[RMDB]
Structure probing data (DMS and 2A3) for a 177-nucleotide construct. Values cover nucleotides 27 to 126. For DMS the reverse transcriptase was MarathonRT. Source: RMDB library TTRDEL, as collected in RNAgym. The RNA was probed in 150 mM KOAc, 10 mM MgCl2 and 150 mM bicine (pH 8.5) at 24 C. For 2A3, 2,950 sequencing reads were counted. For DMS, 1,775 sequencing reads were counted.

RNA sequence: GGGAACGACUCGAGUAGAGUCGAAAAGAUAUGGAUCCACGUGAAGAGCUUAGAUUUGUCGGAAACGACUGUCAGCUCCACGGGAUCCUAAGUCAAACGUCCGGUUUGGUUCGCCAAACCGGACGAAUCCCUAUCUUUGGUUCGCCAAAGAUAGGGAAAAAGAAACAACAACAACAAC
Reactivity to DMS in 0.01 (KOAc 150mM, MgCl2 10mM, bicine 150mM(pH8.5), 24C), signal-to-noise 2, nucleotides 027 to 126: g000a030u000a300u000g000g000a000u000c010c000a070c020g030u000g000a170a130g000a010g020c000u000u010a140g000a020u000u000u000g020u000c000g010g010a120a110a170c000g040a020c000u010g010u000c010a040g030c000u000c000c020a000c000g000g000g000a000u000c020c010u000a010a060g010u000c010a090a120a270c010g010u000c010c000g010g000u010u000u000g000g000u000u010c300g000c010c000a000a000a000c000c010g010g020a000c010g010a010a010
Reactivity to 2A3 in 0.01 (KOAc 150mM, MgCl2 10mM, bicine 150mM(pH8.5), 24C), signal-to-noise 3, nucleotides 027 to 126: g020a010u050a040u130g010g000a000u030c000c020a300c260g000u030g100a230a300g000a040g000c050u190u250a110g010a090u300u300u300g000u040c020g000g040a110a040a070c020g020a000c000u020g010u000c000a010g010c000u030c000c000a000c000g020g010g010a000u000c000c000u000a030a000g030u000c010a150a110a100c010g000u030c010c000g010g020u010u000u000g090g040u040u180c270g020c090c000a010a000a000c010c010g000g000a000c000g000a000a000